[RMDB]
RNA sequence: GGGAACGACUCGAGUAGAGUCGAAAAAUCCUGGCAUUCGUGCCAGGAUGUUUACCGAGAAAGUCCCUCCGUAUAAAAGGGCAACCCUUGGAAACAAGGGAAUAAUCGCAGUGUUCGCACUGCGAAAGAAUAGCACAAGUUUCGACUUGUGCUAUUCAAAAGAAACAACAACAACAAC
Reactivity to 2A3 in 0.01 (KOAc 150mM, MgCl2 10mM, bicine 150mM(pH8.5), 24C), signal-to-noise 6, nucleotides 027 to 126: a010u000c000c000u000g000g000c000a010u010u050c180g070u050g000c000c010a010g000g000a000u000g000u000u080u040a090c010c010g020a040g070a140a040a010g120u050c010c010c000u010c020c020g110u230a100u060a230a100a020a000g000g010g000c010a020a060c000c000c010u000u000g010g010a030a030a010c010a000a000g000g020g030a010a030u100a020a000u030c010g010c000a000g000u010g050u050u080c120g040c070a000c000u000g000c000g000a000a000a000
Reactivity to DMS in 0.01 (KOAc 150mM, MgCl2 10mM, bicine 150mM(pH8.5), 24C), signal-to-noise 7, nucleotides 027 to 126: a010u000c000c000u000g000g010c000a040u000u010c190g030u000g010c010c000a000g000g010a000u000g000u000u000u010a160c010c010g020a170g010a040a050a040g020u010c000c000c000u000c050c110g010u010a110u010a070a080a100a020g000g010g010c040a200a090c010c000c000u000u000g000g000a190a090a180c000a000a000g000g010g000a060a030u010a100a120u000c010g000c000a000g020u000g010u010u010c240g010c000a010c010u000g000c000g000a010a030a060